RNA sequence: GGGAACGACUCGAGUAGAGUCGAAAAGACUCAGAAUGUGUUCACCCUCUUUCCUUCUGCCAUCGAUGCUGGAUGGCUCCCAUACGAGGAGGGGGAGUCUGCAGCUUCUCCAGAACCAGGGUCCAAAGCACUGAUGAGUGUUCGCACUCAUCAGUGCAAAAGAAACAACAACAACAAC
Reactivity to DMS in 0.01 (KOAc 150mM, MgCl2 10mM, bicine 150mM(pH8.5), 24C), signal-to-noise 1, nucleotides 027 to 126: g040a040c040u020c040a060g060a060a030u010g000u000g030u010u000c000a120c050c000c020u020c040u000u000u040c040c030u020u000c060u020g020c060c010a030u000c070g030a080u040g020c160u010g000g000a080u060g000g000c010u000c010c050c040a060u070a080c290g000a110g030g000a010g020g000g000g000g000a030g000u000c000u010g000c090a080g010c030u010u000c000u000c070c000a080g000a140a130c080c040a080g020g000g010u000c010c100a020a080a080
Reactivity to 2A3 in 0.01 (KOAc 150mM, MgCl2 10mM, bicine 150mM(pH8.5), 24C), signal-to-noise 3, nucleotides 027 to 126: g030a000c030u020c040a030g070a090a150u130g030u020g010u150u060c020a090c020c040c000u000c030u060u130u070c010c000u010u040c020u030g010c040c030a030u010c040g190a110u140g080c080u050g060g020a030u020g040g010c000u020c000c010c000a090u100a120c160g050a070g050g030a050g050g020g000g000g000a010g020u020c050u070g030c000a000g000c000u040u000c010u000c000c020a000g020a020a010c020c010a010g050g020g000u020c020c020a080a050a050